The record gives the reactivity of an RNA of 177 nucleotides to DMS. It was measured as part of the RMDB library RFMREP. For DMS the reverse transcriptase was MarathonRT. Conditions: 150 mM KOAc, 10 mM MgCl2 and 150 mM bicine (pH 8.5), 24 C. The DMS profile rests on 1,231 reads.
[RMDB]
RNA sequence: GGGAACGACUCGAGUAGAGUCGAAAAGAGCGGCAGAGGGACUGGCCCGAUGAAGCCCGGCAACCUAACUUUAUUUAAGCGUAAAGUGAAGGUGCUAAUUCCAGCAAAAUGGUGUAUUCCGUUUUGGGUCAGUUAAAGGGUUCGCCCUUUAACUGACAAAAGAAACAACAACAACAAC
Reactivity to DMS in 0.01 (KOAc 150mM, MgCl2 10mM, bicine 150mM(pH8.5), 24C), signal-to-noise 2, nucleotides 027 to 126: g000a080g060c130g050g030c020a000g010a050g050g000g020a260c070u000g010g000c020c000c000g020a090u020g000a090a080g030c000c020c040g000g010c010a040a030c000c020u000a250a010c000u000u000u000a000u000u010u000a110a140g030c290g010u000a000a000a000g020u000g000a050a110g010g010u000g040c020u000a050a100u000u010c000c010a020g000c030a010a010a020a020u000g010g000u000g020u010a080u000u000c000c000g010u000u000u000u000g020g000